Source: RMDB library M2RFOK, as collected in RNAgym. An RNA of 207 nucleotides, treated with 2A3 and read out base by base. The RNA was probed in 150 mM KOAc, 10 mM MgCl2 and 150 mM bicine (pH 8.5) at 24 C.
RNA sequence: GGGAACGACUCGAGUAGAGUCGAAAAGAUUUAAACAGAUGGAGAUACACUAAUGUUUGAAUCCCAGUAACAAAAAUCCUGGUAUCUCGGGUAUACAGUAGUGCAGAUACUGUAUUUUUAAUGCUCCUUAGGUUUUCCAUCUUCGGAUGGAAAACAACUUCUAUUUGAAGUUCGCUUCAAAUAGAAGAAAAGAAACAACAACAACAAC
Reactivity to 2A3 in 0.01 (KOAc 150mM, MgCl2 10mM, bicine 150mM(pH8.5), 24C), signal-to-noise 2, nucleotides 027 to 156: g010a000u030u020u010a000a000a010c000a020g160a180u110g020g000a020g000a000u000a000c040a000c050u110a140a060u030g000u010u000u020g010a020a030u020c000c000c020a080g090u200a160a140c090a120a180a020a000a030u050c000c000u000g010g000u000a010u000c010u010c000g000g000g010u000a000u000a010c000a000g020u040a000g030u040g300c060a010g040a210u010a010c000u000g000u000a010u000u010u000u020u070a140a140u070g010c010u130c060c030u060u150a050g150g000u010u000u010u000c010c000a000u010c000u030u060c260g100g000a000u000g000g000a000a000a000a000c000a000a000